[RMDB]
RNA sequence: GGGAACGACUCGAGUAGAGUCGAAAAACUAACGGUAGCUUUCCUGAUUUUCCACUCCCACUUGGUGACCCAUCGAAACCCAGUGACGCGGAUAUUGUCACCGUGAUGAUGCUCGAUGAAGAGCAGAGUGAUAGUUAGUCUUCGGACUAACUAUCACAAAAGAAACAACAACAACAAC
Reactivity to DMS in 0.01 (KOAc 150mM, MgCl2 10mM, bicine 150mM(pH8.5), 24C), signal-to-noise 4, nucleotides 027 to 126: a090c060u000a060a110c140g010g000u000a040g020c030u010u000u010c010c010u000g010a140u010u000u000u000c020c040a100c090u010c040c040c010a110c110u020u010g000g010u000g010a090c040c060c050a080u010c110g020a060a130a090c020c020c020a100g010u020g010a070c060g030c120g030g000a120u010a140u020u020g010u000c030a050c010c040g000u010g010a080u000g000a150u000g010c010u000c010g010a150u010g010a140a110g010a050g010c010a030g020a110
Reactivity to 2A3 in 0.01 (KOAc 150mM, MgCl2 10mM, bicine 150mM(pH8.5), 24C), signal-to-noise 4, nucleotides 027 to 126: a010c060u100a080a000c030g040g030u050a040g020c030u060u040u050c000c000u060g100a130u120u050u050u000c020c020a040c050u000c000c020c020a040c030u010u050g000g000u010g040a070c000c030c010a060u080c030g080a110a050a080c010c010c000a010g030u030g020a010c020g010c050g090g040a040u070a060u170u150g040u040c020a000c050c000g000u040g030a120u090g000a020u060g020c010u000c010g240a270u240g190a100a140g000a010g000c020a010g040a020